[RMDB]
RNA sequence: GGGAACGACUCGAGUAGAGUCGAAAAAGAUGCCCCUGCCACUGUGAACGGUGCCGCCCGACAGGACACGCUCAGCCCCUGACACGCUCGGCUCUGCGCGCCUGAGACCAGCACCGAGAGGAGACAGUGCCUGUCGACUAUUCGUAGUCGACAGGCAAAAAGAAACAACAACAACAAC
Reactivity to 2A3 in 0.01 (KOAc 150mM, MgCl2 10mM, bicine 150mM(pH8.5), 24C), signal-to-noise 2, nucleotides 027 to 126: a040g080a050u170g040c000c000c000c030u020g000c000c030a060c030u050g000u010g170a130a060c020g000g030u040g000c000c000g090c000c000c010g030a030c010a000g070g000a060c040a020c080g020c000u020c010a020g020c000c000c000c030u030g010a040c010a020c130g050c030u060c050g020g000c000u000c020u030g050c040g000c000g000c010c050u090g010a090g030a050c010c000a000g040c010a000c000c010g000a040g000a030g050g040a040g010a010c010a000g020
Reactivity to DMS in 0.01 (KOAc 150mM, MgCl2 10mM, bicine 150mM(pH8.5), 24C), signal-to-noise 2, nucleotides 027 to 126: a020g060a110u020g000c040c000c010c000u000g000c050c010a040c010u010g030u000g000a030a110c010g000g000u000g000c020c090g070c090c030c000g020a050c130a030g000g000a090c000a060c160g010c000u000c130a050g000c030c000c050c030u020g020a080c110a070c020g000c030u020c040g050g000c020u020c130u020g000c060g000c140g070c020c040u000g000a150g000a130c030c010a180g000c030a020c000c000g040a090g010a090g020g000a070g010a040c070a050g010